[RMDB]
RNA sequence: GGGAACGACUCGAGUAGAGUCGAAAAAAGGGACAAAAGAAGAGUUUGUGUUUUUAUUACACAAAAUGGAUACAAUCUAUCUAAUAAAAACUGCUCUAUUUGACUCCAGCAGAUUUGCUCACCAAGAAUAUUUUUUCUUUCUCUUUCAGCAAUGGGAGUAAUGCGGUAAUUUCGAUUACCGCAUUACAAAAGAAACAACAACAACAAC
Reactivity to 2A3 in 0.01 (KOAc 150mM, MgCl2 10mM, bicine 150mM(pH8.5), 24C), signal-to-noise 1, nucleotides 027 to 156: a000a040g050g010g000a010c050a030a090a060a050g150a110a000g000a020g010u080u200u270g100u090g000u040u000u000u000u040a020u030u160a100c090a000c020a070a040a080a170u070g010g010a020u080a190c060a080a040u050c010u020a020u000c000u050a040a010u040a040a050a000a000a010c010u000g020c000u000c020u060a100u020u060u010g020a020c010u000c020c010a020g060c010a000g030a190u100u130u150g000c010u000c020a080c020c010a010a010g080a120a020u050a050u000u150u030u070u030u020c000u020u080u030c010u010c000u040u170u100c020a070g000c070a140a060u150g070g000g060a100